Notes: Structure probing data (2A3) for a 207-nucleotide construct. Reactivities are rounded to 0.1 and cut off at 0 and 3. It was measured as part of the RMDB library OK3TST. Conditions: 150 mM KOAc, 10 mM MgCl2 and 150 mM bicine (pH 8.5), 24 C.
RNA sequence: GGGAACGACUCGAGUAGAGUCGAAAAUCAAGGUAGAAAGGGACAAGAAAACGCACAUAGAAAACCCGAUUAUUCACACUUGCAAGUUAAGGUAUGCACCACAAGUGCCGCUCAGCCAGCUCCAGAGGAUUGGGUUGAUUGCACCUUCAAUGCUCUGCCACAGUGAUUCUUUCGAGAAUCACUGUGGAAAAGAAACAACAACAACAAC
Reactivity to 2A3 in 0.01 (KOAc 150mM, MgCl2 10mM, bicine 150mM(pH8.5), 24C), signal-to-noise 2, nucleotides 027 to 156: u060c000a040a060g090g000u030a040g030a020a030a000g010g000g030a100c040a160a080g080a150a110a040a010c060g070c020a020c000a070u090a020g070a040a080a020a000c030c070c010g040a030u040u080a040u120u160c060a020c000a010c140u000u080g050c020a040a040g040u160u170a060a010g030g020u050a020u130g030c000a030c020c010a040c030a090a030g010u000g040c020c020g020c000u060c020a010g000c040c000a020g040c030u030c070c000a040g010a000g010g000a020u010u130g130g010g000u010u100g040a130u090u110g080c020a040c020c000u110u120c060a060a030u010g000c000u070c030u110g060